[RMDB]
Conditions: 150 mM KOAc, 10 mM MgCl2 and 150 mM bicine (pH 8.5), 24 C. Chemical mapping of a 177-nucleotide RNA with 2A3 and DMS. DMS adducts were read by reverse transcription with MarathonRT. For 2A3 the reverse transcriptase was SuperScript II with manganese.
RNA sequence: GGGAACGACUCGAGUAGAGUCGAAAACCAAUUGCCUCAGGCCCAGCCACUCCGGGCCGCGAUCAGCCCGGGCUUUCCCUACUUUGGGGCCCAAUGCUGUCGCGAAGAGUUCGGCUCUGUCAGCCCGCUUUGUCCACAAGUUCGCUUGUGGACAAAGAAAAGAAACAACAACAACAAC
Reactivity to 2A3 in 0.01 (KOAc 150mM, MgCl2 10mM, bicine 150mM(pH8.5), 24C), signal-to-noise 4, nucleotides 027 to 126: c000c000a000a070u090u100g030c000c000u060c050a040g040g010c010c010c000a020g010c010c000a050c030u030c000c010g000g020g000c000c010g020c000g020a060u180c050a000g010c000c060c070g000g010g010c000u050u090u070c020c000c000u090a170c130u170u160u170g000g000g000g030c000c000c020a030a020u170g000c000u010g000u030c000g000c000g010a040a010g040a010g020u050u100c060g070g000c010u020c020u070g120u050c070a020g020c000c000c000g030
Reactivity to DMS in 0.01 (KOAc 150mM, MgCl2 10mM, bicine 150mM(pH8.5), 24C), signal-to-noise 3, nucleotides 027 to 126: c000c010a130a070u020u050g010c060c040u010c070a080g020g030c030c020c020a060g000c040c130a100c050u000c110c040g000g000g010c010c030g000c030g030a010u030c020a020g030c010c300c240g000g020g050c030u000u040u050c000c000c020u030a120c260u010u030u020g010g020g000g000c000c020c000a090a150u000g000c010u000g000u020c000g010c020g000a060a020g000a040g000u000u020c080g000g040c000u030c010u000g000u030c110a160g000c010c010c020g000